[RMDB]
RNA sequence: GGGAACGACUCGAGUAGAGUCGAAAACCAUUCCAUAUACCUUGAGUAUUGCUGAAUUCAGUUUAGCGUGCAUGCUCUUGGCUAUUCUCAUAGUGAUUGUCAAAUUUGGAGUUACUUAUUCGUCAAUAAAACACUACCACGUUCGCGUGGUAGUGAACUUCCAGUAGUGCUUCGGCACUACUGGAAGAAAAGAAACAACAACAACAAC
Reactivity to 2A3 in 0.01 (KOAc 150mM, MgCl2 10mM, bicine 150mM(pH8.5), 24C), signal-to-noise 2, nucleotides 027 to 156: c010c000a020u040u020c070c010a070u160a020u040a170c000c000u000u050g010a000g010u020a080u150u170g020c060u060g040a160a130u210u170c150a160g200u120u130u180a070g040c070g030u040g020c050a040u030g010c010u010c000u000u000g000g000c000u120a070u120u010c060u010c030a140u190a220g100u090g170a210u030u100g090u130c040a090a050a080u160u010u020g040g000a050g060u030u080a020c050u060u100a100u110u180c060g120u010c050a080a140u070a200a040a000a000c000a000c000u020a000c000c000a000c020g000u050u060c040g030c040g150u000g000g040u000a000g010u000g000a000a010